[RMDB]
RNA sequence: GGGAACGACUCGAGUAGAGUCGAAAAGGGGUCUCAGUAUUCGAACGUCAGCUUGGAUUUAUAGCAUGUAGUUUUUCGACUGAAGCCUCCACGGUCGAAAAACGCAGAUAUGCUAUUGUCAGCUGUUAUGGUUCCUUUACUGAGACGGAGGCACCCACGAUGCCUUAUUCUUCGGAAUAAGGCAUCGAAAAGAAACAACAACAACAAC
Reactivity to 2A3 in 0.01 (KOAc 150mM, MgCl2 10mM, bicine 150mM(pH8.5), 24C), signal-to-noise 2, nucleotides 027 to 156: g020g010g000g000u010c000u020c000a000g010u030a030u000u030c030g000a050a020c030g070u010c010a010g010c010u120u270g230g030a170u210u300u050a020u060a010g000c000a000u000g070u140a150g010u080u010u000u000u010c000g000a000c000u000g030a040a020g030c000c000u000c000c000a020c010g010g000u000c010g000a000a000a000a000a000c030g060c060a030g030a190u060a000u020g000c000u000a020u020u070g100u030c020a010g000c010u020g030u100u070a230u140g210g050u030u100c000c000u010u010u000a000c000u020g000a000g000a000c000g000g000a000g000g030c000a000c010c010c000a020